[RMDB]
The record gives the reactivity of an RNA of 177 nucleotides to 2A3 and DMS. For DMS the reverse transcriptase was MarathonRT.
RNA sequence: GGGAACGACUCGAGUAGAGUCGAAAAAGACUUGUAUUCGUACAAGUCUACAGAAAUUUCGCUAGCACACGAUCACACCUAGCGUUCACAAUAACGAUCGAACAACGUGUCAAUUCGUUGACACGAAACAAGUUGGUUUGUUCGCAAACCAACUUGUAAAAGAAACAACAACAACAAC
Reactivity to 2A3 in 0.01 (KOAc 150mM, MgCl2 10mM, bicine 150mM(pH8.5), 24C), signal-to-noise 2, nucleotides 027 to 126: a000g010a000c000u020u000g000u020a020u010u090c250g020u020a000c000a000a000g000u010c000u000a000c020a030g270a040a150a090u050u090u000c010g020c030u020a010g000c080a030c000a000c150g020a030u030c000a040c000a040c130c000u000a020g010c030g000u040u040c120a080c040a100a080u110a120a030c110g000a020u010c030g050a050a010c050a040a030c010g000u020g010u000c000a010a010u060u020c090g030u050u020g010a000c010a000c000g030a020a000
Reactivity to DMS in 0.01 (KOAc 150mM, MgCl2 10mM, bicine 150mM(pH8.5), 24C), signal-to-noise 2, nucleotides 027 to 126: a040g010a000c000u000u000g020u010a020u000u010c210g010u000a000c000a000a000g050u000c000u010a160c140a090g000a100a040a110u010u000u000c000g000c010u000a000g010c120a120c190a080c030g000a020u000c000a050c170a180c100c000u000a000g020c010g020u000u000c040a050c000a090a050u010a050a100c180g010a030u000c000g000a130a130c220a090a240c000g020u000g000u000c010a000a020u000u000c110g000u000u010g030a010c000a000c000g030a020a040
For 2A3, 1,789 sequencing reads were counted.